[RMDB]
RNA sequence: GGGAACGACUCGAGUAGAGUCGAAAAACUGCCGUAGCGUAUACGUACGCUACGGCAGAAGAGUUAUGAUGUGUAAAUCCUAUUCCAUUGCUGAAAUGCAGUGUGGAACAUAAUGAACUGAACUCAACGAUGCUCCACUGUUCGCAGUGGAGCAUCGAAAAGAAACAACAACAACAAC
Reactivity to 2A3 in 0.01 (KOAc 150mM, MgCl2 10mM, bicine 150mM(pH8.5), 24C), signal-to-noise 1, nucleotides 027 to 126: a000c010u000g000c060c000g070u000a000g020c000g050u000a000u000a040c030g180u030a030c000g000c000u000a000c000g000g000c000a000g020a000a000g000a000g000u100u100a150u200g220a050u000g220u000g030u280a140a180a060u000c000c050u070a050u100u000c030c000a000u000u170g120c050u080g070a000a000a150u250g150c000a000g000u000g070u200g080g000a010a020c050a020u270a270a100u280g150a100a000c020u000g000a000a000c010u000c000a050a050